[RMDB]
RNA sequence: GGGAACGACUCGAGUAGAGUCGAAAACGCCACCUUUGCCAUGGUCGAGAUGCGGGUCGUCCUUCGGGAGAUCCUGCGCCGCGUCGAGUUGAGCACCACCACGACCUCCGGCGAACGGCCGAAGCUACGUCAACUACCUAUUCGUAGGUAGUUGACGAAAAGAAACAACAACAACAAC
Reactivity to 2A3 in 0.01 (KOAc 150mM, MgCl2 10mM, bicine 150mM(pH8.5), 24C), signal-to-noise 2, nucleotides 027 to 126: c030g050c010c010a040c020c070u010u060u080g010c030c010a040u130g000g020u030c020g040a010g010a110u220g060c020g000g020g030u020c030g230u010c020c000u020u070c120g090g010g010a050g000a020u030c020c040u040g020c050g000c020c000g030c020g020u040c030g030a070g050u080u100g110a040g060c040a040c020c000a010c030c010a070c000g000a020c000c010u060c040c000g000g000c000g000a080a040c040g040g000c000c000g040a040a000g030c030u100a060
Reactivity to DMS in 0.01 (KOAc 150mM, MgCl2 10mM, bicine 150mM(pH8.5), 24C), signal-to-noise 3, nucleotides 027 to 126: c130g010c030c020a120c110c060u000u000u000g010c030c030a130u010g010g010u000c030g010a110g000a090u000g030c090g020g010g040u000c040g000u000c000c000u000u000c100g020g020g020a230g000a040u000c000c010u010g030c010g010c020c020g000c080g010u000c040g000a110g030u000u000g010a150g010c120a100c070c040a050c020c010a130c050g000a060c040c010u000c080c050g000g030c040g030a080a120c090g020g010c010c020g000a090a080g010c070u000a140
Structure probing data (2A3 and DMS) for a 177-nucleotide construct. For 2A3 the reverse transcriptase was SuperScript II with manganese. Source: RMDB library OK2TST, as collected in RNAgym. For 2A3, 2,456 sequencing reads were counted.